An RNA of 177 nucleotides, treated with 2A3 and DMS and read out base by base. Reactivities are given for positions 27 through 126.

RNA sequence: GGGAACGACUCGAGUAGAGUCGAAAAUGGUAACUGGAGUAAGACAAGGGGAAGUGGCAGGACCUUUCCUCUUCAAUUUCGCAAUCGACGACAUUGUGCGAAGAACAGUCGACCAGUGUCCUGCCGAGAUCACCAGGUACUUCGGUACCUGGUGAUCAAAAGAAACAACAACAACAAC
Reactivity to 2A3 in 0.01 (KOAc 150mM, MgCl2 10mM, bicine 150mM(pH8.5), 24C), signal-to-noise 2, nucleotides 027 to 126: u000g000g030u040a010a000c030u000g060g000a060g070u270a140a020g070a050c040a030a070g000g020g010g000a010a010g060u050g010g000c000a000g040g000a050c010c000u060u060u020c000c010u050c000u010u000c010a050a050u000u030u030c000g000c000a020a090u060c160g040a120c030g140a040c150a070u210u300g060u020g000c040g020a040a000g000a110a030c000a000g060u080c070g030a050c030c030a040g020u000g000u110c000c000u000g000c020c000g090a080
Reactivity to DMS in 0.01 (KOAc 150mM, MgCl2 10mM, bicine 150mM(pH8.5), 24C), signal-to-noise 1, nucleotides 027 to 126: u000g000g000u020a160a000c000u010g020g010a130g010u020a080a100g010a120c260a080a090g050g040g000g000a030a000g000u020g050g000c010a040g000g010a060c070c000u000u000u020c000c000u000c050u000u000c090a060a070u000u000u000c000g060c020a040a070u010c060g000a090c160g000a160c150a060u060u000g000u010g000c000g080a000a050g000a120a160c090a010g000u000c110g000a100c010c000a010g010u010g010u000c000c000u000g000c000c010g000a150
It was measured as part of the RMDB library OK1LIB. For 2A3 the reverse transcriptase was SuperScript II with manganese. The RNA was probed in 150 mM KOAc, 10 mM MgCl2 and 150 mM bicine (pH 8.5) at 24 C.